Conditions: 150 mM KOAc, 10 mM MgCl2 and 150 mM bicine (pH 8.5), 24 C.
This 207-nucleotide RNA was probed chemically with 2A3 and DMS.
It was measured as part of the RMDB library M2RFPK.
RNA sequence: GGGAACGACUCGAGUAGAGUCGAAAACAUUACGAAUUCAGUCGCACAUUGUAGAAUUAGCUACUCUACGAUUUAGUGAGCGUUAGUAACGUUGUAAUAUAAUAUAGUCUUUGGAAGGAUUAUAUUGGAGCCGCGGACAAGUUCGCUUGUCCGCGAACGUACACAUAAUGUUCGCAUUAUGUGUACGAAAAGAAACAACAACAACAAC
Reactivity to 2A3 in 0.01 (KOAc 150mM, MgCl2 10mM, bicine 150mM(pH8.5), 24C), signal-to-noise 8, nucleotides 027 to 156: c030a040u120u210a050c040g080a110a110u130u120c060a070g050u040c010g000c010a010c000a020u020u040g000u010a020g010a050a050u070u040a050g020c030u060a030c010u000c010u040a020c020g090a080u050u120u200a100g010u050g030a020g010c010g000u020u090a050g040u060a110a050c070g000u010u020g020u050a100a080u080a070u020a140a030u010a000u000a010g010u000c030u060u110u150g150g040a120a060g020g000a010u010u000a010u010a010u000u030g040g040a050g070c050c010g000c010g000g010a000c000a010a000g010u030u100c130g020c140u000u000g000u000c010c000g000c000g000a000a000
Reactivity to DMS in 0.01 (KOAc 150mM, MgCl2 10mM, bicine 150mM(pH8.5), 24C), signal-to-noise 3, nucleotides 027 to 156: c020a090u010u000a080c040g010a130a100u000u010c060a140g020u000c000g030c010a060c080a080u010u010g000u010a030g020a090a080u010u000a150g020c130u000a090c060u000c020u000a040c010g020a100u000u010u000a090g020u010g000a070g020c040g020u000u000a060g010u020a040a060c060g000u010u020g020u000a070a110u000a100u000a020a030u000a010u000a000g010u000c010u000u010u010g030g000a240a260g000g000a030u000u020a010u000a010u000u000g010g010a130g010c120c020g030c000g010g020a030c020a000a010g000u000u010c300g000c000u000u010g010u000c000c020g030c010g010a000a020